[RMDB]
RNA sequence: GGGAACGACUCGAGUAGAGUCGAAAAAGGUGUAGAUCACCUAUUCUAACUUCACCUGUUUUGAUACCCUGAUGAGGAAAGUCCCAGGACUUGUCAGCUGGGAUAGGCCCCAUGACAGGGCCGCUCGUACCACAUAUUAGUUCGCUAAUAUGUGGUAAAAAGAAACAACAACAACAAC
Reactivity to DMS in 0.01 (KOAc 150mM, MgCl2 10mM, bicine 150mM(pH8.5), 24C), signal-to-noise 9, nucleotides 027 to 126: a020g000g010u000g010u010a060g010a150u050c090a040c080c060u010a080u020u010c060u010a080a120c080u010u010c040a040c040c010u000g010u000u010u000u010g000a140u020a120c010c020c000u000g000a070u020g010a030g000g000a070a090a160g010u000c000c000c000a040g000g000a110c080u010u020g010u010c100a090g000c050u000g000g000g000a030u000a040g010g010c010c000c000c050a090u020g010a100c240a120g000g000g010c010c020g010c050u000c060g010
Reactivity to 2A3 in 0.01 (KOAc 150mM, MgCl2 10mM, bicine 150mM(pH8.5), 24C), signal-to-noise 9, nucleotides 027 to 126: a000g030g000u040g010u060a070g030a220u250c050a070c050c010u020a090u090u090c050u050a080a130c030u070u060c030a060c030c020u040g160u060u110u090u080g110a090u180a170c000c010c000u050g060a110u090g010a050g020g060a100a030a030g020u000c010c000c000a010g040g060a130c080u120u110g090u210c060a040g040c040u010g000g000g000a010u010a020g020g000c010c010c000c020a100u160g040a060c050a060g000g000g010c010c000g010c000u030c010g030

Structure probing data (DMS and 2A3) for a 177-nucleotide construct. It was measured as part of the RMDB libraries RFM100 and RFMREP. As a SHAPE reagent, 2A3 marks flexible, mostly unpaired nucleotides at the ribose 2'-OH. The reactions ran in a buffer of 150 mM KOAc, 10 mM MgCl2 and 150 mM bicine (pH 8.5), at 24 C.